Chemical mapping of a 177-nucleotide RNA with 2A3 and DMS.

RNA sequence: GGGAACGACUCGAGUAGAGUCGAAAAAGAAAUAGCGUACUGUACACUCAGAAUGUACGCUAAGUAAGUGUGUGUUCUAUAACGUCCAAUUGAACACACACACAGUUCGACCGAGUGUAAAAAAAAAGAUAGAUUUCAGUUUCGACUGAAAUCUAUCAAAAGAAACAACAACAACAAC
Reactivity to 2A3 in 0.01 (KOAc 150mM, MgCl2 10mM, bicine 150mM(pH8.5), 24C), signal-to-noise 2, nucleotides 027 to 126: a000g110a010a100a030u050a000g000c010g020u000a000c020u090g050u120a000c020a010c020u010c010a060g050a160a110u110g020u020a000c000g000c000u000a010a020g070u050a090a050g010u020g000u000g000u000g000u000u000c030u030a120u040a180a120c090g130u060c040c030a060a030u040u060g000a000a000c000a000c000a000c000a000c010a000c000a020g080u070u070c010g050a020c110c030g010a030g000u010g020u090a090a020a030a010a000a000a000a030a020
Reactivity to DMS in 0.01 (KOAc 150mM, MgCl2 10mM, bicine 150mM(pH8.5), 24C), signal-to-noise 2, nucleotides 027 to 126: a050g000a030a070a070u000a010g010c000g010u000a010c010u020g010u000a050c020a010c050u000c030a100g000a170a080u010g030u000a000c010g000c000u010a000a070g010u000a100a090g010u020g030u000g010u000g000u000u000c000u000a040u000a070a080c220g000u000c170c090a090a120u010u010g020a040a000c000a000c000a000c010a000c020a090c120a110g000u000u010c020g000a210c060c050g000a050g040u000g000u020a040a030a000a010a050a080a040a090a140
For 2A3, 2,113 sequencing reads were counted. 2A3 adducts were read by reverse transcription with SuperScript II with manganese. DMS adducts were read by reverse transcription with MarathonRT.